About this RNA: Source: RMDB library M2PK50, as collected in RNAgym. Structure probing data (DMS and 2A3) for a 177-nucleotide construct. 2A3 adducts were read by reverse transcription with SuperScript II with manganese. Reactivities are given for positions 27 through 126. Conditions: 150 mM KOAc, 10 mM MgCl2 and 150 mM bicine (pH 8.5), 24 C. As a SHAPE reagent, 2A3 marks flexible, mostly unpaired nucleotides at the ribose 2'-OH.
RNA sequence: GGGAACGACUCGAGUAGAGUCGAAAAUCCUGCUAGUUCGCUAGCAGGAAAAACAAAACUGUACACGCAGUACAGAAUAACAAAAACAAAACAAAAUGCGUAAAAGCACAGGCUUCGGCCUGUGCAAGAUUACAACGAAGUUCGCUUCGUUGUAAUCAAAAGAAACAACAACAACAAC
Reactivity to DMS in 0.01 (KOAc 150mM, MgCl2 10mM, bicine 150mM(pH8.5), 24C), signal-to-noise 3, nucleotides 027 to 126: u000c000c000u000g000c000u000a000g010u000u010c180g020c000u000a010g000c000a040g000g010a000a010a020a070a070c130a050a110a070a140c010u010g000u010a000c010a050c050g030c000a170g010u000a000c000a010g000a120a060u010a070a130c140a010a070a050a040a110c160a050a050a090a110c110a040a050a090a050u000g000c000g000u010a120a020a060a100g000c000a000c010a000g020g000c000u000u000c220g040g020c000c000u000g000u000g010c010a010a000
Reactivity to 2A3 in 0.01 (KOAc 150mM, MgCl2 10mM, bicine 150mM(pH8.5), 24C), signal-to-noise 5, nucleotides 027 to 126: u010c000c000u010g000c000u000a000g020u050u050c240g020c120u000a000g000c000a010g000g010a080a050a020a000a010c030a010a080a010a050c010u010g000u000a000c020a000c020g030c010a010g010u010a000c000a000g070a050a080u190a090a010c080a010a100a060a000a010c060a020a110a010a010c050a030a170a050a050u070g010c010g080u160a040a060a000a090g000c000a000c000a000g000g010c000u040u160c210g080g000c010c000u000g000u010g000c000a000a000